[RMDB]
RNA sequence: GGGAACGACUCGAGUAGAGUCGAAAAACUGGUGAACUCUCCCUUGUAAUUAGUGGGAGAAAUUCAUGUUUCCGAAGCAUAAAUUAAUUGAUGUAAUUACCAGUAUUAAACAGCACGGUGCUUUGUUCCAGUUAUUGCCUUUCGAGGCAAUAACUGGAAAAGAAACAACAACAACAAC
Reactivity to 2A3 in 0.01 (KOAc 150mM, MgCl2 10mM, bicine 150mM(pH8.5), 24C), signal-to-noise 1, nucleotides 027 to 126: a000c000u000g000g000u000g020a020a000c030u000c020u050c000c060c000u000u050g280u160a270a160u270u070a110g060u140g000g000g000a000g000a000a000a000u000u000c000a000u060g020u000u000u000c060c060g080a030a030g040c000a050u200a180a060a070u300u300a000a030u150u030g110a090u230g020u120a000a200u150u060a000c020c020a000g000u080a030u020u180a090a090a000c120a000g090c050a000c170g010g000u110g000c000u120u080u080g000u100u000